[RMDB]
RNA sequence: GGGAACGACUCGAGUAGAGUCGAAAAGAUAUGGAUACUCGCUUGGACCUGACUGCCUCGGAAACGAGGUUCAGCUAGCGAAUCCUAAGUCUUAAAAGUUACUCCAUGGUUCGCCAUGGAGUAACAACACCAACAGGGACUUCGGUCCCUGUUGGUGAAAAGAAACAACAACAACAAC
Reactivity to DMS in 0.01 (KOAc 150mM, MgCl2 10mM, bicine 150mM(pH8.5), 24C), signal-to-noise 1, nucleotides 027 to 126: g000a010u010a300u000g000g000a010u000a220c130u010c010g020c000u000u000g040g030a090c300c000u000g010a060c300u000g020c010c000u000c010g000g000a130a100a150c020g010a010g000g010u000u000c000a040g060c040u000a020g000c000g010a010a070u000c000c000u020a030a130g010u000c000u010u010a120a040a100a120g030u000u000a000c000u010c000c000a010u000g000g000u000u020c140g000c000c000a000u000g010g010a000g000u000a000a000c000a040a180

This 177-nucleotide RNA was probed chemically with DMS. The DMS profile rests on 692 reads. Reactivities are rounded to 0.1 and cut off at 0 and 3. For DMS the reverse transcriptase was MarathonRT. Values cover nucleotides 27 to 126.